RNA sequence: GGGAACGACUCGAGUAGAGUCGAAAAUCUUUAUAGCAAAACCAAAACAAAGUACUUCUAUCAUGGUAAGUUAGAUUGGGAUGAGAAGUCCAGUGCGGGUCGCUACGUCCGUGAUCACUGCAAGCCAGAUGGAGUAAUAGUUCGCUAUUACUCCAUCAAAAGAAACAACAACAACAAC
Reactivity to 2A3 in 0.01 (KOAc 150mM, MgCl2 10mM, bicine 150mM(pH8.5), 24C), signal-to-noise 5, nucleotides 027 to 126: u020c020u040u230u130a300u220a130g040c040a020a070a070a100c030c020a040a050a030a100c060a040a150a030g070u050a080c020u030u050c020u050a100u080c040a050u110g080g000u080a060a070g040u060u090a020g020a120u040u090g070g000g030a020u040g050a030g010a140a020g020u000c030c020a040g040u040g070c050g010g050g020u050c030g030c070u060a080c040g040u000c030c000g050u050g020a010u070c040a030c080u050g010c040a070a030g060c020c010a010
Reactivity to DMS in 0.01 (KOAc 150mM, MgCl2 10mM, bicine 150mM(pH8.5), 24C), signal-to-noise 5, nucleotides 027 to 126: u010c030u000u000u000a120u010a110g000c060a070a070a100a110c050c040a040a100a070a100c130a080a080a120g000u000a060c060u000u000c020u000a060u000c070a080u000g010g010u010a040a120g010u000u010a060g010a100u000u010g020g000g010a060u000g000a140g000a050a090g010u000c030c030a070g010u000g020c120g010g000g010u010c070g000c070u010a050c080g010u000c040c020g020u000g000a050u010c040a070c080u000g000c080a040a130g000c050c070a100